The record gives the reactivity of an RNA of 207 nucleotides to DMS and 2A3.
Reactivities are given for positions 27 through 156.
For DMS, 1,809 sequencing reads were counted.
The 2A3 profile rests on 1,845 reads.
The reactions ran in a buffer of 150 mM KOAc, 10 mM MgCl2 and 150 mM bicine (pH 8.5), at 24 C.
For DMS the reverse transcriptase was MarathonRT.
Values are in units of 0.01, from 0 to 300, in steps of 10.
It was measured as part of the RMDB library M2RFPK.
RNA sequence: GGGAACGACUCGAGUAGAGUCGAAAAGAAAGAGAGUUAGACACGGUUGAACUCACCCUUCGGGGGGGCUAUAGAGAUCACUGGAAGCACUACCGGACAACCGGAACAUUGCAGCAAUGCAGCCCAAAAAAUCCAAACAUCUUCGGAUGUUUGGAAACCAUCAGAUGUAGUUCGCUACAUCUGAUGGAAAAGAAACAACAACAACAAC
Reactivity to DMS in 0.01 (KOAc 150mM, MgCl2 10mM, bicine 150mM(pH8.5), 24C), signal-to-noise 1, nucleotides 027 to 156: g020a100a080a080g000a130g010a040g000u000u000a070g030a080c070a070c040g010g020u010u020g020a100a130c000u010c020a090c040c020c000u000u000c100g010g020g000g020g020g020g020c040u000a050u000a200g010a080g010a080u000c060a100c060u000g000g010a080a060g030c010a070c100u000a180c040c050g030g000a080c170a060a080c050c030g030g000a050a030c070a090u000u000g060c000a090g010c080a100a100u000g000c030a040g010c020c010c020a010a030a070a060a080a110u040c010c000a000a010a020c000a000u000c000u000u000c300g060g000a030u000g010u000u000u000g020g000a000a010a050
Reactivity to 2A3 in 0.01 (KOAc 150mM, MgCl2 10mM, bicine 150mM(pH8.5), 24C), signal-to-noise 2, nucleotides 027 to 156: g040a000a090a010g090a000g010a000g010u040u060a030g050a080c050a030c170g040g050u040u100g020a030a010c010u020c030a100c020c010c000u060u130c150g050g010g000g000g000g020g000c010u060a040u110a120g030a010g010a030u060c010a020c080u020g010g050a050a010g020c030a020c060u060a050c040c000g030g000a060c050a130a180c020c020g010g010a050a020c040a030u070u140g000c000a010g010c010a030a070u050g030c000a030g000c000c000c000a000a130a000a020a010a030u000c000c000a000a000a000c000a000u010c000u010u010c080g140g010a000u000g000u000u000u000g000g000a010a000a000